[RMDB]
RNA sequence: GGGAACGACUCGAGUAGAGUCGAAAAUAAAUGAGCGUACAGCACACUCAGUCUGUACGCUAUCUGAGUGUGUCAACUUCAAAGUCCAACGACACACACAAGGCGUUGGAACAAGAGUGUGAGAAAACUAACCUACUACAUUCGUGUAGUAGGUUAGAAAAGAAACAACAACAACAAC
Reactivity to DMS in 0.01 (KOAc 150mM, MgCl2 10mM, bicine 150mM(pH8.5), 24C), signal-to-noise 8, nucleotides 027 to 126: u000a080a090a100u010g020a040g020c020g010u000a020c040a040g000c090a060c030a050c070u010c040a150g000u000c010u000g000u000a010c010g010c010u000a010u000c070u010g000a110g010u000g000u000g000u010c080a090a060c100u000u000c160a070a100a160g000u000c030c030a010a040c060g000a080c030a040c050a050c110a100c160a070a070g010g010c040g000u000u000g000g010a040a050c100a080a140g010a010g000u000g010u000g010a150g000a070a050a060a120
Reactivity to 2A3 in 0.01 (KOAc 150mM, MgCl2 10mM, bicine 150mM(pH8.5), 24C), signal-to-noise 6, nucleotides 027 to 126: u170a000a110a100u180g070a020g050c030g010u040a000c030a010g010c030a010c010a020c060u080c010a020g110u020c030u030g050u020a010c000g000c010u000a020u000c030u040g040a040g010u050g000u030g050u040c030a050a040c060u170u120c110a110a160a040g040u020c030c010a030a020c040g050a030c010a000c000a000c000a000c030a120a060g060g010c020g020u030u020g030g030a070a030c040a150a040g010a020g020u040g020u020g020a060g110a020a090a010a000
An RNA of 177 nucleotides, treated with DMS and 2A3 and read out base by base. For 2A3, 10,590 sequencing reads were counted. The DMS profile rests on 10,849 reads. Conditions: 150 mM KOAc, 10 mM MgCl2 and 150 mM bicine (pH 8.5), 24 C. 2A3 adducts were read by reverse transcription with SuperScript II with manganese.